[RMDB]
RNA sequence: GGGAACGACUCGAGUAGAGUCGAAAACAGCACUACUCAUUACGGGAAAUCUCACUACAAAUGAGACCUCCAUCAUCCCUUCUUAUGAGAUAUAUGUCAACCCUUCUAACUCCACUUAUGAUAACACAUUUAACAAAUUUUCAAGUUCUUUCUGUGAACCCUGACCAUAGUUCGCUAUGGUCAGGGUAAAAGAAACAACAACAACAAC
Reactivity to 2A3 in 0.01 (KOAc 150mM, MgCl2 10mM, bicine 150mM(pH8.5), 24C), signal-to-noise 2, nucleotides 027 to 156: c040a000g030c030a010c060u080a010c000u010c020a050u030u240a230c040g000g000g000a000a040a060u010c000u010c040a060c010u200a110c090a030a120a050u060g010a030g000a060c040c040u130c020c000a100u090c000a120u000c000c060c000u010u050c010u010u110a020u070g030a000g030a020u080a000u000a000u160g030u010c000a000a040c000c000c000u060u050c080u060a060a080c010u000c020c090a090c010u130u100a080u140g120a040u140a130a010c040a030c020a180u170u180u100a160a050c050a110a090a050u210u200u170u230c080a130a000g000u000u060c010u070u010u050c000u060g140u000g110a080